This 177-nucleotide RNA was probed chemically with DMS and 2A3.
Values cover nucleotides 27 to 126.
The data come from the RNA Mapping Database (RMDB), library TTRINS.
The RNA was probed in 150 mM KOAc, 10 mM MgCl2 and 150 mM bicine (pH 8.5) at 24 C.
The DMS profile rests on 2,465 reads.
[RMDB]
RNA sequence: GGGAACGACUCGAGUAGAGUCGAAAAGAUAUGGACCCACUCAGUACUCGCUUCGCUUGGAUUUAGUUAGGUCGGAAACGACCUAACUUGUCAGCGAAGAACUACGAGGAAGUGUGGGUCCUAAGUCCCUGGCAUAUAAGUUCGCUUAUAUGCCAGGAAAAGAAACAACAACAACAAC
Reactivity to DMS in 0.01 (KOAc 150mM, MgCl2 10mM, bicine 150mM(pH8.5), 24C), signal-to-noise 2, nucleotides 027 to 126: g020a060u010a240u000g000g020a010c000c000c000a000c010u000c000a060g010u010a240c010u000c000g010c000u000u000c000g010c000u010u000g020g010a020u000u030u010a000g020u010u000a000g000g000u000c000g020g010a080a120a300c010g010a010c000c000u000a000a000c000u000u000g010u000c010a050g010c000g000a010a020g010a050a070c170u030a300c030g010a000g000g000a170a250g010u000g000u000g010g010g010u000c000c010u010a000a140g000u000c040
Reactivity to 2A3 in 0.01 (KOAc 150mM, MgCl2 10mM, bicine 150mM(pH8.5), 24C), signal-to-noise 4, nucleotides 027 to 126: g060a050u090a060u240g000g000a000c000c000c000a000c010u030c020a040g030u030a020c000u010c030g100c020u030u000c020g080c060u120u300g300g000a100u300u300u030a000g000u000u000a000g010g010u030c020g030g010a140a070a020c000g000a000c000c000u000a000a010c010u000u010g000u000c000a000g020c000g000a000a000g000a020a020c040u170a120c110g020a010g150g070a050a040g300u120g000u000g120g000g020u000c000c000u000a000a000g000u000c000